[RMDB]
RNA sequence: GGGAACGACUCGAGUAGAGUCGAAAAGCACUCCUUUUCGAAGGAGUGCCCAGGCGCGCGGCCUUUGUCCUGUCGCGUGAGCGCCGCGCGCGAUAUACGCGCAUCUGUGCAUAUUCGUAUGCACAAAGUGGAAACCUAAUUUCGAUUAGGUUUCCACAAAAGAAACAACAACAACAAC
Reactivity to 2A3 in 0.01 (KOAc 150mM, MgCl2 10mM, bicine 150mM(pH8.5), 24C), signal-to-noise 2, nucleotides 027 to 126: g010c000a010c000u020c010c000u050u040u020u070c210g140a020a010g000g000a000g000u000g000c000c000c000a050g050g040c010g000c000g000c000g000g020c010c010u080u160u220g090u050c000c010u130g130u210c070g000c010g010u030g020a020g030c040g000c000c000g020c000g010c000g000c000g010a010u020a010u030a040c010g000c000g000c030a060u010c070u080g020u000g000c000a000u000a010u050u090c200g070u000a000u000g020c000a000c010a000a020a000
Reactivity to DMS in 0.01 (KOAc 150mM, MgCl2 10mM, bicine 150mM(pH8.5), 24C), signal-to-noise 2, nucleotides 027 to 126: g010c010a010c000u000c000c000u000u000u000u010c150g030a020a020g000g020a030g000u000g000c020c040c090a150g010g010c020g000c010g040c000g000g000c010c100u000u030u020g000u000c030c040u000g000u010c060g010c010g010u000g010a120g010c090g020c000c020g010c010g020c000g000c000g000a070u020a050u000a050c010g010c000g010c280a140u010c120u010g010u000g010c000a010u000a020u010u000c180g020u000a010u000g000c000a020c000a000a030a060
The data come from the RNA Mapping Database (RMDB), library M2PK50. Chemical mapping of a 177-nucleotide RNA with 2A3 and DMS. Conditions: 150 mM KOAc, 10 mM MgCl2 and 150 mM bicine (pH 8.5), 24 C. For 2A3, 3,305 sequencing reads were counted. DMS adducts were read by reverse transcription with MarathonRT.